Background:
An RNA of 177 nucleotides, treated with 2A3 and DMS and read out base by base. The RNA was probed in 150 mM KOAc, 10 mM MgCl2 and 150 mM bicine (pH 8.5) at 24 C. Values cover nucleotides 27 to 126. The data come from the RNA Mapping Database (RMDB), library VIROID. For DMS the reverse transcriptase was MarathonRT.

RNA sequence: GGGAACGACUCGAGUAGAGUCGAAAACGCUCUCCUGAUGAGCCCAUGGCAGGGCGAAACCAGUAUGGUACAAUAUGGCAAGGCUUGCCUCGGAGUCAAGCGGGAGGGCUCCCGGGGCGCCGCACGGCCUAAGAUCCAUCUUCGGAUGGAUCUUAGGAAAAGAAACAACAACAACAAC
Reactivity to 2A3 in 0.01 (KOAc 150mM, MgCl2 10mM, bicine 150mM(pH8.5), 24C), signal-to-noise 3, nucleotides 027 to 126: c050g000c010u020c000u030c000c010u030g040a080u040g040a080g090c000c010c010a070u090g070g000c040a030g010g050g000c000g020a080a010a000c000c020a040g130u110a120u170g090g090u260a080c080a130a080u110a090u170g040g000c030a060a090g050g020c020u040u110g000c000c010u010c080g020g020a060g030u010c020a010a120g070c030g010g020g000a010g000g000g010c000u010c020c010c000g000g010g000g000c040g000c010c000g010c010a060c040g080g000
Reactivity to DMS in 0.01 (KOAc 150mM, MgCl2 10mM, bicine 150mM(pH8.5), 24C), signal-to-noise 3, nucleotides 027 to 126: c230g000c010u000c000u000c020c020u000g000a110u010g010a150g020c020c020c040a100u010g010g010c090a030g000g000g000c020g000a050a130a090c010c010a050g000u000a050u000g010g020u010a110c200a110a100u010a050u010g000g010c020a070a300g000g000c020u010u000g010c010c000u010c110g000g000a030g000u000c010a050a080g010c030g010g000g000a050g000g000g000c010u010c020c020c020g020g010g020g020c040g010c030c020g010c100a070c120g010g000